The record gives the reactivity of an RNA of 177 nucleotides to 2A3 and DMS. The RNA was probed in 150 mM KOAc, 10 mM MgCl2 and 150 mM bicine (pH 8.5) at 24 C. For 2A3 the reverse transcriptase was SuperScript II with manganese. For 2A3, 1,030 sequencing reads were counted.

RNA sequence: GGGAACGACUCGAGUAGAGUCGAAAAAACACUGUUUGGAAUAUGGCGAUCAUAGCACAUUGCUAUGAAUUUCGUGAUUUUAGAGUUGCCGCUUUCAAGGGAGAUGAUUCCGUGGUCCUCUGUAGCGGUCCAUAGCUAUCUUCGGAUAGCUAUGGACAAAAGAAACAACAACAACAAC
Reactivity to 2A3 in 0.01 (KOAc 150mM, MgCl2 10mM, bicine 150mM(pH8.5), 24C), signal-to-noise 1, nucleotides 027 to 126: a000a000c090a030c050u110g040u060u060u000g050g030a050a020u050a040u070g080g040c010g010a010u060c000a000u000a010g020c010a050c060a220u110u300g000c000u000a010u000g020a090a090u060u060u040c050g000u060g080a140u000u000u020u300a040g010a010g050u060u130g040c000c010g030c040u020u140u030c080a030a010g020g030g000a060g010a060u110g000a070u100u000c080c010g030u010g050g010u000c000c010u000c030u040g020u110a000g070c030g070
Reactivity to DMS in 0.01 (KOAc 150mM, MgCl2 10mM, bicine 150mM(pH8.5), 24C), signal-to-noise 2, nucleotides 027 to 126: a030a030c080a060c060u000g010u010u000u010g010g010a080a040u010a080u020g010g010c040g000a070u000c000a000u000a010g010c000a160c300a120u010u000g000c000u000a000u010g000a050a100u020u000u000c030g030u010g020a080u010u000u000u030a070g010a090g030u000u010g010c000c010g010c110u000u000u010c060a030a040g000g010g020a030g010a100u010g000a180u010u000c050c020g000u000g000g000u000c110c010u000c050u000g010u000a030g000c100g000